[RMDB]
RNA sequence: GGGAACGACUCGAGUAGAGUCGAAAACAAUCCAACGCGGGAAUCCGAAUAUCAGGCUUUACUACGAUGGAUGGAGGAGAAAAUGCCGAUACCUUUAGCGAAAUGGCAAGGUGCAUGUCUACCGCGGGCGAUGUAAUAACUUCGGUUAUUACAUCGCAAAAGAAACAACAACAACAAC
Reactivity to DMS in 0.01 (KOAc 150mM, MgCl2 10mM, bicine 150mM(pH8.5), 24C), signal-to-noise 5, nucleotides 027 to 126: c220a100a120u010c040c030a140a080c020g020c030g000g000g010a150a080u010c040c000g020a120a170u030a040u020c050a090g000g020c190u050u050u020a090c130u000a080c160g000a060u030g000g030a290u030g000g010a100g000g010a110g000a020a040a050a070u020g000c040c280g000a100u020a040c050c010u000u010u020a100g010c060g020a130a090a100u020g000g000c040a030a050g020g000u010g000c020a030u010g020u020c040u000a200c010c000g000c030g000g010
Reactivity to 2A3 in 0.01 (KOAc 150mM, MgCl2 10mM, bicine 150mM(pH8.5), 24C), signal-to-noise 8, nucleotides 027 to 126: c020a000a050u040c000c020a010a020c020g000c010g000g000g050a020a110u030c020c010g060a080a020u050a020u120c030a040g120g040c030u170u190u120a110c070u080a100c090g100a080u140g020g010a030u050g050g020a050g040g040a020g060a010a100a010a000u060g000c010c020g040a050u090a140c010c000u090u100u120a050g030c040g110a190a220a190u220g090g010c010a000a000g040g010u030g010c030a020u030g030u040c050u040a050c010c000g010c000g010g020